Chemical mapping of a 177-nucleotide RNA with DMS.
RNA sequence: GGGAACGACUCGAGUAGAGUCGAAAAAAAAAGAUAUGGACGUCAAGAGCUGAUGACCCAUGGUGAAAAUAUAUCGGAAACGAUAUAUGGGAUCCAUGGCAAGGCUCUGGACGUCCUAAGUCAAAAACAAACUCUGUAUCUUCGGAUACAGAGUUUGAAAAGAAACAACAACAACAAC
Reactivity to DMS in 0.01 (KOAc 150mM, MgCl2 10mM, bicine 150mM(pH8.5), 24C), signal-to-noise 1, nucleotides 027 to 126: a020a060a040a100a090g000a000u010a030u020g000g000a010c010g040u010c000a070a000g010a020g030c010u000g030a040u000g000a070c300c000c000a010u010g020g020u000g000a150a030a110a000u000a020u000a000u000c000g030g000a010a010a010c000g020a010u000a000u000a000u000g000g000g000a060u010c000c000a000u000g010g000c000a010a030g000g010c000u000c000u000g000g000a010c010g000u010c000c000u000a000a030g000u010c010a030a050a010a110a130
DMS (dimethyl sulfate) methylates the pairing face of unpaired adenines and cytosines. The reactions ran in a buffer of 150 mM KOAc, 10 mM MgCl2 and 150 mM bicine (pH 8.5), at 24 C.